Description
This 207-nucleotide RNA was probed chemically with 2A3. The RNA was probed in 150 mM KOAc, 10 mM MgCl2 and 150 mM bicine (pH 8.5) at 24 C.
[RMDB]
RNA sequence: GGGAACGACUCGAGUAGAGUCGAAAAAGGGUCGUACGCGACCGAGGCGCGGCUAGGUCGACGGACCGAACAAUGGCAUCCCGCAUUCUGCCAUCCGCCGCGCAGCUUCUUCUCAAACGGUGCGGAAAAAAGUAGGACACCUUCGGGUGUCCUACAAGUAAUCUAUGCCGUUCGCGGCAUAGAUUACAAAAGAAACAACAACAACAAC
Reactivity to 2A3 in 0.01 (KOAc 150mM, MgCl2 10mM, bicine 150mM(pH8.5), 24C), signal-to-noise 1, nucleotides 027 to 156: a010g080g000g010u020c020g000u040a030c200g010c010g160a000c010c010g010a140g010g030c010g030c000g040g000c000u000a000g000g000u000c010g160a150c230g080g050a000c000c010g000a000a020c010a000a030u000g000g010c000a020u160c050c020c000g000c000a020u300u090c030u070g000c000c000a010u000c000c010g000c000c000g010c000g000c000a000g010c000u070u060c010u050u030c050u000c040a090a120a050c070g000g000u010g020c000g000g000a110a000a000a000a000a000g010u010a000g000g000a000c000a000c000c010u050u090c190g030g000g010u010g000u010c000c010u000a000c000a000a000